[RMDB]
RNA sequence: GGGAACGACUCGAGUAGAGUCGAAAAAUUCUUAAAGAGUAGACAAUACGAAGUUCAUCGAGUAUUUUAUGGGGGCGAAAUAGGAUCGACGUGCCUAAUAAAAAUUUUGCUUUUACUCCCGGAAGCACAGGUGUCUAGCCUUCGGGUUAGAUACCUGAAAAGAAACAACAACAACAAC
Reactivity to 2A3 in 0.01 (KOAc 150mM, MgCl2 10mM, bicine 150mM(pH8.5), 24C), signal-to-noise 7, nucleotides 027 to 126: a010u050u020c020u050u090a160a130a030g140a050g050u130a030g030a100c080a060a090u110a110c050g090a100a030g060u070u120c030a080u070c070g010a020g030u050a100u040u130u040u060a100u120g030g000g000g030g000c040g050a080a060a080u160a080g030g040a040u090c040g030a020c010g040u070g040c010c010u080a150a120u130a060a110a030a020a020u100u160u100u080g010c000u020u030u020u060a090c030u020c010c000c000g010g000a000a000g010c010a000
Reactivity to DMS in 0.01 (KOAc 150mM, MgCl2 10mM, bicine 150mM(pH8.5), 24C), signal-to-noise 6, nucleotides 027 to 126: a110u020u010c030u020u020a060a080a090g000a110g010u020a060g000a080c080a060a100u020a050c050g010a080a130g010u020u010c100a100u010c040g020a130g000u000a010u010u020u010u020a060u010g000g000g020g000g020c100g000a030a040a070u010a060g010g000a050u020c060g010a080c060g010u010g000c020c050u020a040a080u040a030a020a050a070a120u020u030u020u010g010c000u000u010u000u000a080c090u000c000c000c010g000g000a020a020g010c050a110